[RMDB]
An RNA of 170 nucleotides, treated with 2A3 and DMS and read out base by base. The 2A3 profile rests on 8,466 reads.
RNA sequence: GGGAACGACUCGAGUAGAGUCGAAAAUGGUUGUAUACCUCUUAGUGUCAUCCCACUGUGUGCUUCAAAUAAACUUCGCGUUGUAAUUCCUGACUUCACCGUCUGGAAUCAGGUAGUCACAUAUCCCGGCGUCCUGUGUUCGCACAGGACAAAAGAAACAACAACAACAAC
Reactivity to 2A3 in 0.01 (KOAc 150mM, MgCl2 10mM, bicine 150mM(pH8.5), 24C), signal-to-noise 5, nucleotides 027 to 129: u160g010g000u010u020g080u070a030u030a090c010c020u030c030u020u090a080g000u000g010u060c050a120u070c000c000c000a030c020u010g010u020g020u020g110c010u070u100c080a060a100a110u270a110a090a050c040u100u070c110g020c040g040u030u030g050u040a050a060u030u000c000c000u000g000a020c000u050u050c130a050c050c050g030u010c010u050g010g020a000a000u020c010a000g080g000u030a030g010u020c030a020c020a050u040a050u020c000c000c000g040g030c010
Reactivity to DMS in 0.01 (KOAc 150mM, MgCl2 10mM, bicine 150mM(pH8.5), 24C), signal-to-noise 8, nucleotides 027 to 129: u060g030g040u000u000g020u030a100u040a050c040c040u010c040u010u010a080g030u020g020u040c050a130u030c030c030c010a110c110u020g030u020g000u030g020c070u050u020c030a080a130a090u000a080a040a040c070u050u040c010g000c140g020u000u000g000u020a120a080u010u010c040c000u000g000a040c020u000u000c240a050c150c220g020u030c000u030g030g010a010a000u010c090a000g020g010u000a040g030u000c100a000c070a040u070a070u020c020c010c010g020g050c220